The record gives the reactivity of an RNA of 177 nucleotides to 2A3 and DMS. The DMS profile rests on 1,371 reads. The data come from the RNA Mapping Database (RMDB), library OK2TRN. For 2A3, 790 sequencing reads were counted. Values cover nucleotides 27 to 126. The RNA was probed in 150 mM KOAc, 10 mM MgCl2 and 150 mM bicine (pH 8.5) at 24 C.
[RMDB]
RNA sequence: GGGAACGACUCGAGUAGAGUCGAAAAAUAAGUGCAAACAACGAAUGUUCAUGAAAUCAGUUUGUGAUUCGUUGAACUUUUCACUCCGGAGAAUAAUUAAUGAGCCGUCUGCAGCAGCGAUUUAUUCUACGACUAUGACAUUCGUGUCAUAGUCGUAAAAAGAAACAACAACAACAAC
Reactivity to 2A3 in 0.01 (KOAc 150mM, MgCl2 10mM, bicine 150mM(pH8.5), 24C), signal-to-noise 1, nucleotides 027 to 126: a000u080a050a030g060u030g010c000a000a050a180c000a050a040c010g000a010a040u120g040u260u050c010a010u020g030a060a100a060u180c110a100g200u010u040u090g030u040g030a020u030u000c000g000u000u010g000a070a050c000u100u060u000u030c010a010c030u060c040c020g070g040a050g120a070a040u180a160a040u110u100a010a040u170g070a010g010c020c050g040u120c010u060g040c020a060g000c000a000g010c040g030a040u050u090u010a110u090u000c030
Reactivity to DMS in 0.01 (KOAc 150mM, MgCl2 10mM, bicine 150mM(pH8.5), 24C), signal-to-noise 2, nucleotides 027 to 126: a050u000a070a060g000u000g000c100a080a060a130c050a030a050c050g020a010a050u010g000u020u010c010a020u000g000a030a030a200u010c220a140g000u010u000u010g040u000g040a100u000u000c020g000u010u010g000a120a080c040u010u000u000u000c040a040c060u000c040c050g000g000a070g010a030a050u010a060a050u010u010a050a120u010g010a130g030c040c020g000u000c050u010g010c080a060g000c040a040g040c040g000a070u020u000u010a070u020u000c070